[RMDB]
RNA sequence: GGGAACGACUCGAGUAGAGUCGAAAAGGUGCCCUAAUCGGAGCACUGCAGUUCCGAUGGAAAGGCUAAGCACGUCGCAAUGACGUAAGGUGGGACUUUUCCCUAGGGUUUGAGCGGUCGAACCCAGGUAAUGCAAUAGCUUCGGCUAUUGCAUUACAAAAGAAACAACAACAACAAC
Reactivity to DMS in 0.01 (KOAc 150mM, MgCl2 10mM, bicine 150mM(pH8.5), 24C), signal-to-noise 3, nucleotides 027 to 126: g010g010u000g020c000c000c000u000a130a080u010c010g030g000a020g020c000a100c160u010g000c210a170g010u000u000c000c000g010a000u000g020g020a100a130a080g000g000c020u010a040a150g010c140a030c000g000u000c000g000c200a100a140u010g000a010c010g010u020a060a100g000g010u000g000g000g000a070c070u000u000u010u000c020c000c030u010a110g010g010g000u000u010u000g000a050g020c200g000g010u000c040g020a010a080c000c000c010a080g020
Reactivity to 2A3 in 0.01 (KOAc 150mM, MgCl2 10mM, bicine 150mM(pH8.5), 24C), signal-to-noise 2, nucleotides 027 to 126: g050g000u080g030c020c000c030u020a030a020u020c010g000g000a010g030c020a060c230u250g040c040a050g000u030u000c000c000g010a020u020g010g060a070a010a030g090g000c040u050a070a010g080c100a010c040g000u030c020g000c220a250a300u270g020a000c010g000u010a060a040g140g010u110g000g020g000a080c030u060u000u040u090c000c000c000u070a090g000g000g000u020u000u030g060a030g020c170g020g130u040c010g030a010a010c010c000c010a010g090

This 177-nucleotide RNA was probed chemically with DMS and 2A3. The RNA was probed in 150 mM KOAc, 10 mM MgCl2 and 150 mM bicine (pH 8.5) at 24 C. The 2A3 profile rests on 2,356 reads.